[RMDB]
Chemical mapping of a 177-nucleotide RNA with DMS and 2A3.
For DMS, 15,330 sequencing reads were counted.
2A3 adducts were read by reverse transcription with SuperScript II with manganese.
For DMS the reverse transcriptase was MarathonRT.
The reactions ran in a buffer of 150 mM KOAc, 10 mM MgCl2 and 150 mM bicine (pH 8.5), at 24 C.
RNA sequence: GGGAACGACUCGAGUAGAGUCGAAAACAGGCGUGUCGGCUGCAAAGGAAGUUUGGGUGGACGAGCCGCCUUCCGCUCUCGGCAGCGUAUCUCGAAUACUUUCCCGUUGGUGGGACCUUGGGCGCGGUCUUGUGAGCGGGUUCGCUCGUUCGCAAGAAAAAGAAACAACAACAACAAC
Reactivity to DMS in 0.01 (KOAc 150mM, MgCl2 10mM, bicine 150mM(pH8.5), 24C), signal-to-noise 2, nucleotides 027 to 126: c110a050g000g010c050g010u000g000u010c020g000g030c020u000g010c050a060a060a070g010g010a040a300g000u000u010u020g010g010g040u000g000g010a050c040g000a040g000c030c030g010c100c050u010u030c010c020g020c020u010c040u000c100g000g000c040a080g000c040g020u000a090u050c010u020c000g000a300a300u150a300c230u020u020u020c030c000c010g020u040u040g000g030u000g010g000g000a090c300c060u000u020g000g000g000c030g010c000g010g020
Reactivity to 2A3 in 0.01 (KOAc 150mM, MgCl2 10mM, bicine 150mM(pH8.5), 24C), signal-to-noise 5, nucleotides 027 to 126: c040a010g040g000c030g020u060g020u070c030g050g020c020u000g020c060a070a050a050g080g040a060a030g050u000u160u130g100g020g000u030g030g010a020c020g000a010g020c010c000g010c010c000u070u020c010c000g010c000u000c000u010c020g030g000c020a020g000c020g020u030a300u100c080u030c000g000a250a140u270a300c000u060u120u070c000c000c000g050u100u230g080g040u200g010g010g020a030c000c030u030u050g000g000g000c020g010c020g020g000